RNA sequence: GGGAACGACUCGAGUAGAGUCGAAAACGGAGUCUACCUCCAUCUGGUCCGUCCGGGCCCUCUUCGCCGGAGGCGCCCCCUCCCCGUCCUUAUCCUUCUUUCCAAGUAUUCCUUUGAUGUUUCCCAGAGUAAGUUAUUCCUUCGGGAAUAACUUACUAAAAGAAACAACAACAACAAC
Reactivity to DMS in 0.01 (KOAc 150mM, MgCl2 10mM, bicine 150mM(pH8.5), 24C), signal-to-noise 1, nucleotides 027 to 126: c100g000g000a100g000u000c060u000a190c140c000u010c040c010a120u000c100u010g000g020u000c030c040g020u010c040c120g000g000g010c020c040c060u000c020u000u000c160g020c120c180g040g000a080g000g000c070g020c000c010c010c010c020u000c020c030c010c020g010u010c030c000u000u000a090u010c020c010u000u020c040u010u000u000c020c030a100a180g000u010a120u010u010c020c000u000u030u000g040a050u000g010u010u010u000c010c010c040a230g010

Record summary: This 177-nucleotide RNA was probed chemically with DMS.